[RMDB]
RNA sequence: GGGAACGACUCGAGUAGAGUCGAAAACAUUUUUAAAAUCUUCGCACUGUUCAUUCUAGGAGCUCGCGUGACAGCUGUGACGCGUGAAAUCGCAUGGCUGCAGUUUCCUACAGAAGCGACGUGGGCGCAGGGUAAUCGCGUUCGCGCGAUUACCCUGAAAAGAAACAACAACAACAAC
Reactivity to 2A3 in 0.01 (KOAc 150mM, MgCl2 10mM, bicine 150mM(pH8.5), 24C), signal-to-noise 2, nucleotides 027 to 126: c000a060u010u010u090u220u300a120a260a140a060u190c120u200u100c040g030c000a010c090u040g100u260u100c070a050u110u020c070u040a000g000g000a070g000c010u000c000g090c050g120u080g230a140c000a090g010c000u020g130u050g080a300c130g000c000g000u120g100a040a070a070u160c000g000c000a000u020g030g000c010u000g000c000a000g000u030u130u090c020c000u020a070c010a100g000a070a090g050c010g040a040c000g010u040g100g010g000c000g000